Record summary:
An RNA of 207 nucleotides, treated with DMS and 2A3 and read out base by base. For DMS, 1,866 sequencing reads were counted. The reactions ran in a buffer of 150 mM KOAc, 10 mM MgCl2 and 150 mM bicine (pH 8.5), at 24 C. For 2A3 the reverse transcriptase was SuperScript II with manganese.

[RMDB]
RNA sequence: GGGAACGACUCGAGUAGAGUCGAAAAAAGCCUCCAAGUGAUGAAACCAGGUAAGUUAAAACUGUUAACCAAAAUGCAAAGGAAAAUGGUCUCUCCCAAAUAUUGGCCACAACAAUGUCAUCAAUGGAAACCAGGAGAAUUUGCAAAGUGGAGGUUCAGAAGAUGUGAUUUUCGAAUCACAUCUUCUAAAAGAAACAACAACAACAAC
Reactivity to DMS in 0.01 (KOAc 150mM, MgCl2 10mM, bicine 150mM(pH8.5), 24C), signal-to-noise 1, nucleotides 027 to 156: a040a080g020c010c000u000c040c010a100a180g030u000g020a100u000g000a230a050a100c110c030a050g050g000u000a050a150g000u040u040a160a140a110a160c030u000g000u000u000a110a160c040c040a010a070a130a110u000g020c040a030a090a070g010g010a120a060a190a060u010g000g010u000c040u010c050u010c010c010c020a020a070a020u000a050u000u000g010g020c010c180a130c120a050a040c040a000a120u020g040u000c000a060u000c110a040a120u000g000g000a060a130a020c000c000a050g020g020a180g030a130a160u000u000u000g030c030a020a130a090g060u030g000g010a040g040g000u000u000c040
Reactivity to 2A3 in 0.01 (KOAc 150mM, MgCl2 10mM, bicine 150mM(pH8.5), 24C), signal-to-noise 1, nucleotides 027 to 156: a030a000g020c030c000u050c040c010a100a010g180u130g060a080u030g000a230a020a050c080c060a080g000g000u150a120a090g090u040u160a020a090a000a150c060u010g010u060u050a030a060c060c000a200a010a000a000u080g000c000a010a010a010g010g040a000a030a070a090u030g000g040u020c040u000c020u050c040c020c000a000a080a000u120a020u040u040g010g000c080c010a000c010a140a050c040a150a050u130g030u060c020a010u030c000a050a150u080g010g020a040a050a000c000c030a020g030g070a090g180a040a050u040u000u100g000c000a010a060a060g010u040g000g000a000g010g000u060u040c010